[RMDB]
RNA sequence: GGGAACGACUCGAGUAGAGUCGAAAAGAGCCGUGGAUAAAAUAUGUCGCAACCGCAAAGGCAAGCAAUGCACCGAUCAUGCUGAAAAAAACACGAGGUGCAUACAUGGUGCUCUCCUCCCGAGAACCCUUAUAUUGUGGUUCGCCACAAUAUAAGGAAAAGAAACAACAACAACAAC
Reactivity to DMS in 0.01 (KOAc 150mM, MgCl2 10mM, bicine 150mM(pH8.5), 24C), signal-to-noise 3, nucleotides 027 to 126: g000a060g030c010c040g040u000g000g010a160u010a060a100a150a150u000a070u010g020u010c010g000c050a150a110c030c070g010c120a090a130a170g010g020c040a050a100g000c120a080a040u000g000c000a000c010c010g000a120u000c030a050u010g000c110u000g000a000a010a130a070a100a050a090c010a040c050g010a080g000g020u000g010c020a000u000a030c010a030u000g020g030u020g010c010u000c000u020c100c060u000c000c000c000g000a150g000a110a100c240
Reactivity to 2A3 in 0.01 (KOAc 150mM, MgCl2 10mM, bicine 150mM(pH8.5), 24C), signal-to-noise 4, nucleotides 027 to 126: g010a000g000c020c020g030u030g000g050a070u160a200a200a080a040u190a160u170g030u040c040g000c070a100a120c100c010g040c160a140a050a010g030g000c020a030a010g040c020a010a050u010g010c000a000c030c000g050a070u090c030a040u070g010c050u020g080a160a080a040a000a010a020a010c020a010c020g030a010g000g000u010g000c000a000u010a010c010a010u060g160g000u170g050c000u010c010u000c010c020u030c000c000c000g020a030g020a050a050c000
Structure probing data (DMS and 2A3) for a 177-nucleotide construct. Source: RMDB library RFMREP, as collected in RNAgym.